[RMDB]
The data come from the RNA Mapping Database (RMDB), library RFM100.
This 177-nucleotide RNA was probed chemically with 2A3.
2A3 adducts were read by reverse transcription with SuperScript II with manganese.
The RNA was probed in 150 mM KOAc, 10 mM MgCl2 and 150 mM bicine (pH 8.5) at 24 C.
RNA sequence: GGGAACGACUCGAGUAGAGUCGAAAAACGCUGCUUACGAGCAGCGACGGGGCAGAGAGGCCCUAUUGGGGCCGCUGUGACAGCUCCGCGUACGCCAGUGGCCCAAUACGCAGGUUACGACCUGCGACUCCGAGGUGCUUUUCGAAGCACCUCGGAGAAAAGAAACAACAACAACAAC
Reactivity to 2A3 in 0.01 (KOAc 150mM, MgCl2 10mM, bicine 150mM(pH8.5), 24C), signal-to-noise 1, nucleotides 027 to 126: a000c000g010c000u000g000c070u100u040a000c190g030a070g070c000a000g010c000g000a000c000g000g000g000g000c070a050g050a030g000a070g300g000c000c000c040u050a070u080u210g150g000g000g140c020c010g000c000u070g010u040g190a070c000a040g000c020u050c160c000g000c040g000u000a010c080g000c050c040a010g000u000g080g010c010c000c000a000a000u130a050c010g030c000a000g010g000u050u150a110c210g030a140c060c000u000g000c000g000a000
The 2A3 profile rests on 506 reads. Values cover nucleotides 27 to 126.